This 177-nucleotide RNA was probed chemically with DMS and 2A3. Reactivities are given for positions 27 through 126. The DMS profile rests on 6,089 reads. For 2A3, 8,634 sequencing reads were counted. The RNA was probed in 150 mM KOAc, 10 mM MgCl2 and 150 mM bicine (pH 8.5) at 24 C.
[RMDB]
RNA sequence: GGGAACGACUCGAGUAGAGUCGAAAAACUCGACCCCCGCCGCGACGGCACCGCCGGCCAUGGUCCCGCCGAGCAGGCCGAAUACCGUCAGGCGGGAGUUGACUCGCACCAAGUCGAUGGACGGCGGUCCAGUACUCAGUUUCGACUGAGUACUGGAAAAAGAAACAACAACAACAAC
Reactivity to DMS in 0.01 (KOAc 150mM, MgCl2 10mM, bicine 150mM(pH8.5), 24C), signal-to-noise 3, nucleotides 027 to 126: a120c140u000c030g020a110c040c020c000c000c040g030c010c000g010c170g040a020c040g000g000c180a160c100c160g030c070c010g000g000c000c010a030u040g020g000u010c020c010c000g010c010c040g010a130g030c050a080g020g000c060c020g010a080a160u040a170c010c030g000u000c040a280g000g010c000g000g000g000a010g010u000u020g010a040c050u010c050g010c130a090c090c040a100a060g000u010c020g010a070u050g000g000a060c010g010g000c010g000g000
Reactivity to 2A3 in 0.01 (KOAc 150mM, MgCl2 10mM, bicine 150mM(pH8.5), 24C), signal-to-noise 5, nucleotides 027 to 126: a000c040u020c020g040a030c000c000c020c000c000g010c010c010g070c160g040a030c020g020g000c070a050c020c040g070c010c010g000g000c000c020a160u070g050g020u070c020c000c010g010c000c010g010a020g070c050a060g010g000c010c010g050a030a060u130a120c020c000g010u020c020a010g000g000c000g000g000g000a000g010u010u090g020a020c010u020c030g040c020a070c040c040a040a040g030u040c030g030a060u080g060g030a020c010g000g010c000g000g000
Annotation: For DMS the reverse transcriptase was MarathonRT. The data come from the RNA Mapping Database (RMDB), library OK1LIB. Values are in units of 0.01, from 0 to 300, in steps of 10.